[RMDB]
This 177-nucleotide RNA was probed chemically with DMS and 2A3. Reactivities are rounded to 0.1 and cut off at 0 and 3. High DMS reactivity at an A or C suggests that its Watson-Crick edge is free. Source: RMDB library OK2TRN, as collected in RNAgym. DMS adducts were read by reverse transcription with MarathonRT. Reactivities are given for positions 27 through 126. Conditions: 150 mM KOAc, 10 mM MgCl2 and 150 mM bicine (pH 8.5), 24 C.
RNA sequence: GGGAACGACUCGAGUAGAGUCGAAAACGUCGACCAAUCCUAUGUAUGUUUCAGAUACUGUCACAUUUGUUAAUGUGGCGACAGGCGCCCAGGCUGUUGCCCGAUCCCUUGAUUGGUCCAAGGUCACGAGACUUUUAGUAUUCGUACUAAAAGUCUCAAAAGAAACAACAACAACAAC
Reactivity to DMS in 0.01 (KOAc 150mM, MgCl2 10mM, bicine 150mM(pH8.5), 24C), signal-to-noise 8, nucleotides 027 to 126: c180g010u010c150g010a020c010c010a020a020u010c020c200u010a080u010g010u010a050u000g010u000u000u000c070a080g000a140u000a080c090u000g010u000c040a030c030a030u000u000u010g010u010u010a050a060u000g020u010g020g010c010g010a020c060a040g010g000c040g000c030c030c030a190g000g000c010u000g000u000u000g010c010c020c040g000a090u010c060c020c010u000u000g000a070u000u000g000g000u000c010c160a070a080g000g000u010c140a110c220
Reactivity to 2A3 in 0.01 (KOAc 150mM, MgCl2 10mM, bicine 150mM(pH8.5), 24C), signal-to-noise 6, nucleotides 027 to 126: c010g100u040c050g010a010c000c000a010a020u070c010c020u210a150u200g090u030a100u040g070u060u080u090c040a050g040a220u100a190c040u080g020u060c020a020c020a090u030u090u110g140u110u170a090a060u110g060u090g030g010c010g000a000c000a010g020g030c010g030c020c050c010a010g070g020c020u030g000u080u050g020c000c000c010g040a080u070c020c010c000u020u060g000a030u010u030g000g000u000c020c010a080a030g070g020u080c040a010c150